Chemical mapping of a 177-nucleotide RNA with DMS and 2A3.
[RMDB]
RNA sequence: GGGAACGACUCGAGUAGAGUCGAAAAACAGAAGUUAUGGGCUGGAGUGAGAUGUGAUGUUUAUGGCUCUACUGUGGAUGGCGAGCUCGUGCCACCGUCAAAUCAACCGAAUCCAUUCAACGACCCAGCUACCAUACCCUUUCGAGGGUAUGGUAGCAAAAGAAACAACAACAACAAC
Reactivity to DMS in 0.01 (KOAc 150mM, MgCl2 10mM, bicine 150mM(pH8.5), 24C), signal-to-noise 2, nucleotides 027 to 126: a080c040a080g000a150a120g000u030u000a100u000g010g000g020c030u000g000g010a060g000u000g000a100g000a070u000g020u000g030a100u010g010u000u000u000a150u050g020g010c000u000c020u000a020c020u000g020u000g000g010a070u010g000g000c040g000a090g020c140u000c060g030u000g000c020c020a080c050c060g000u000c090a020a080a100u010c090a040a060c090c020g000a050a070u010c000c000a040u010u000c090a070a120c110g000a090c040c020c010a070
Reactivity to 2A3 in 0.01 (KOAc 150mM, MgCl2 10mM, bicine 150mM(pH8.5), 24C), signal-to-noise 2, nucleotides 027 to 126: a000c060a020g160a140a030g040u070u110a070u210g040g040g010c030u060g070g020a050g060u060g040a140g010a090u050g060u070g080a090u060g070u090u090u080a200u200g000g020c000u000c000u010a060c030u030g060u030g170g000a060u060g020g000c000g000a010g030c070u000c040g040u050g040c010c030a040c040c010g060u070c020a070a030a110u090c030a010a070c040c010g020a020a040u060c020c000a010u080u090c050a060a030c040g030a030c010c000c000a000